[RMDB]
RNA sequence: GGGAACGACUCGAGUAGAGUCGAAAAGUUCGAGCUCUCGGGCGGCCAGAUGCAGCGUCUCAUGAUCGCCCGGGUCUUCAUCAUCAAACCCAGUGUACUGAUCGCCGAUGAGCCCACGUCCAUGAUAAAAUACACAGUACUUCGGUACUGUGUAUUUAAAAGAAACAACAACAACAAC
Reactivity to 2A3 in 0.01 (KOAc 150mM, MgCl2 10mM, bicine 150mM(pH8.5), 24C), signal-to-noise 3, nucleotides 027 to 126: g030u040u080c030g010a000g000c010u020c000u010c040g080g050g010c000g000g010c020c010a030g020a040u100g010c050a120g080c090g140u080c020u020c050a170u120g020a070u030c020g000c000c020c000g020g020g000u000c020u080u020c000a080u020c010a020u020c040a050a050a140c010c000c000a020g040u060g030u130a100c050u040g050a070u030c020g010c020c020g030a060u090g020a010g010c000c020c000a030c020g040u000c010c020a040u040g050a050u220a060
Reactivity to DMS in 0.01 (KOAc 150mM, MgCl2 10mM, bicine 150mM(pH8.5), 24C), signal-to-noise 7, nucleotides 027 to 126: g010u000u000c110g010a050g010c080u000c000u010c020g010g000g030c000g020g020c050c010a040g000a100u000g010c040a150g020c170g010u010c040u000c140a120u000g010a040u010c010g020c000c070c030g010g000g010u010c020u000u000c080a050u010c070a090u010c110a070a080a110c020c010c010a150g010u000g010u000a060c060u000g000a040u000c040g010c030c030g010a050u010g000a070g010c010c010c020a070c080g010u000c030c040a070u000g010a130u010a080

Source: RMDB library OK2TST, as collected in RNAgym.
This 177-nucleotide RNA was probed chemically with 2A3 and DMS.
DMS adducts were read by reverse transcription with MarathonRT.
The reactions ran in a buffer of 150 mM KOAc, 10 mM MgCl2 and 150 mM bicine (pH 8.5), at 24 C.
For DMS, 10,837 sequencing reads were counted.
For 2A3, 4,375 sequencing reads were counted.